[RMDB]
RNA sequence: GGGAACGACUCGAGUAGAGUCGAAAAGCGUACUACCUACGAAGGUGGCCAAGGCUUGGAUUUAUGUCUAAACUUAAUCCCAAAUAGGAUUAAGUAGACAUUGUCAGCCUUGGUGUUACAGCGUAGGUAUCGCAAAAGGACGCGUUCGCGCGUCCAACAGGACAUGACGGUUCGCCGUCAUGUCCUGAAAAGAAACAACAACAACAAC
Reactivity to 2A3 in 0.01 (KOAc 150mM, MgCl2 10mM, bicine 150mM(pH8.5), 24C), signal-to-noise 1, nucleotides 027 to 156: g000c020g090u080a110c050u000a010c020c000u000a000c000g020a050a130g060g010u040g080g040c000c000a010a000g000g010c020u100u120g240g040a030u300u280u100a000u010g000u000c000u040a080a150a150c010u010u000a000a000u030c060c060c020a100a300a240u300a180g010g000a000u000u000a000a000g000u000a000g000a000c000a000u000u000g020u000c030a000g040c000c000u000u000g000g000u000g030u000u130a000c030a000g000c000g000u030a000g000g000u000a010u220c000g010c000a000a000a000a260g000g000a000c000g000c000g000u020u000c120g050c000g070c000g130u020c000c000a000a000